[RMDB]
RNA sequence: GGGAACGACUCGAGUAGAGUCGAAAAUUCACCGGCUAAGGCUUCAGUAGCAGGACCCACGCAAAGAUUAUUUUUAACGCCAUCUUGCAUGUCUUUGUUACCGCCUUUACCAAUGCCAGCGAUUUUGACCACGUCUAUGGUUCGCCAUAGACGUGGUAAAAGAAACAACAACAACAAC
Reactivity to DMS in 0.01 (KOAc 150mM, MgCl2 10mM, bicine 150mM(pH8.5), 24C), signal-to-noise 1, nucleotides 027 to 126: u000u000c020a020c040c100g000g020c040u000a020a020g000g010c010u010u040c280a100g000u010a010g000c030a030g010g000a050c030c080c250a010c150g010c020a060a020a050g010a020u010u000a060u030u050u000u000u000a030a230c250g010c260c180a080u010c040u000u000g020c020a050u010g010u000c010u000u010u010g000u020u020a010c040c070g010c020c010u000u000u000a120c080c060a040a070u020g000c020c050a040g000c070g030a040u040u030u000u000g000
Reactivity to 2A3 in 0.01 (KOAc 150mM, MgCl2 10mM, bicine 150mM(pH8.5), 24C), signal-to-noise 2, nucleotides 027 to 126: u050u020c040a040c150c030g010g020c030u030a030a010g000g000c020u170u110c110a010g020u030a010g000c000a020g030g020a000c010c020c050a060c080g010c010a080a090a000g020a000u110u030a080u010u240u050u230u280a140a030c130g000c030c000a010u020c000u000u010g000c010a010u070g010u000c000u030u300u100g000u000u010a000c020c020g080c010c010u030u030u000a020c040c020a030a040u040g030c010c020a040g030c050g080a040u050u070u020u200g060